Structure probing data (DMS) for a 177-nucleotide construct. Values cover nucleotides 27 to 126. The data come from the RNA Mapping Database (RMDB), library TTRDEL. In probing experiments dimethyl sulfate is read out at A N1 and C N3, which are open when not base-paired.
RNA sequence: GGGAACGACUCGAGUAGAGUCGAAAAGAUAUGGACUCAGCUUGGACCGAUCGUUUCGGAAACGAAACAAUCGCUAGCUGGUCCUAAGUCAAAGGAGUCCGAUGAACUUCGGUUCAUCGGACUCCAACAAAAGCACAGAGUUCGCUCUGUGCUUUUGAAAAGAAACAACAACAACAAC
Reactivity to DMS in 0.01 (KOAc 150mM, MgCl2 10mM, bicine 150mM(pH8.5), 24C), signal-to-noise 2, nucleotides 027 to 126: g000a030u000a270u000g000g010a000c010u020c010a020g040c000u010u010g040g000a160c300c020g010a020u010c040g010u000u000u000c010g000g000a070a060a120c010g010a000a020a000c010a030a020u000c010g040c020u000a020g020c010u000g010g000u000c000c000u010a010a110g010u000c020a080a100a150g000g000a020g010u000c000c010g010a030u000g010a020a010c000u000u020c220g000g020u000u010c000a010u000c010g000g000a000c000u010c000c010a010a050